The record gives the reactivity of an RNA of 177 nucleotides to 2A3 and DMS. For DMS, 1,525 sequencing reads were counted. The data come from the RNA Mapping Database (RMDB), library OK2TST. Reactivities are given for positions 27 through 126. The RNA was probed in 150 mM KOAc, 10 mM MgCl2 and 150 mM bicine (pH 8.5) at 24 C. 2A3 adducts were read by reverse transcription with SuperScript II with manganese.

RNA sequence: GGGAACGACUCGAGUAGAGUCGAAAAGAUACCAUCAGUAUCAUUCACCACUGAUUUCAUAAAAACUCCUGAUUGUUAAGGGGGAUAACCUCCCCCUCAGGUAAAAAUUAUUCUGCGAGAACGACUACAGUAUGGAGGGAUUCGUCCCUCCAUACUGAAAAGAAACAACAACAACAAC
Reactivity to 2A3 in 0.01 (KOAc 150mM, MgCl2 10mM, bicine 150mM(pH8.5), 24C), signal-to-noise 3, nucleotides 027 to 126: g010a020u040a010c010c030a110u150c060a040g030u040a010u030c020a060u070u190c080a110c240c020a020c040u050g060a180u060u260u190c110a050u220a100a110a030a050a050c060u030c020c000u010g070a120u130u110g180u220u110a060a050g000g000g010g000g000a010u030a030a060c000c010u000c000c000c000c000c000u000c000a000g000g000u040a030a030a070a040a000u120u090a040u160u080c060u090g090c110g110a080g040a140a030c030g110a040c070u160a040
Reactivity to DMS in 0.01 (KOAc 150mM, MgCl2 10mM, bicine 150mM(pH8.5), 24C), signal-to-noise 3, nucleotides 027 to 126: g010a040u000a060c010c080a120u010c070a100g000u000a000u000c030a150u000u000c030a150c040c020a120c130u010g000a050u000u000u000c080a060u000a020a060a050a060a260c240u000c000c000u000g010a090u000u010g010u010u020a090a070g010g020g000g020g000a030u000a120a120c240c280u000c000c020c000c010c000u000c050a000g010g010u000a020a030a050a120a060u000u000a090u000u000c030u000g030c070g010a060g000a060a080c060g000a070c070u010a160